[RMDB]
RNA sequence: GGGAACGACUCGAGUAGAGUCGAAAAGAUAUGGAUCGUCUCUACAUACCGAAAUAGCGAUAAGAACCGGUCGGAAACGACCGAGUUCUUUUGACGCUAAUAAGGUAUGUAGAGACGAUCCUAAGUCGUACGGUAUCUGGUUCGCCAGAUACCGUACAAAAGAAACAACAACAACAAC
Reactivity to DMS in 0.01 (KOAc 150mM, MgCl2 10mM, bicine 150mM(pH8.5), 24C), signal-to-noise 1, nucleotides 027 to 126: g000a100u000a300u030g000g010a010u010c000g030u000c000u000c000u000a010c000a010u010a010c010c000g000a110a250a290u000a000g000c000g030a190u010a010a010g000a000a020c010c000g020g000u010c010g050g000a150a100a180c000g010a000c000c000g000a020g010u040u000c000u000u000u000u000g000a300c100g000c000u000a010a060u030a120a270g000g000u000a020u000g000u000a030g010a010g000a010c000g020a000u000c000c000u000a030a030g010u000c070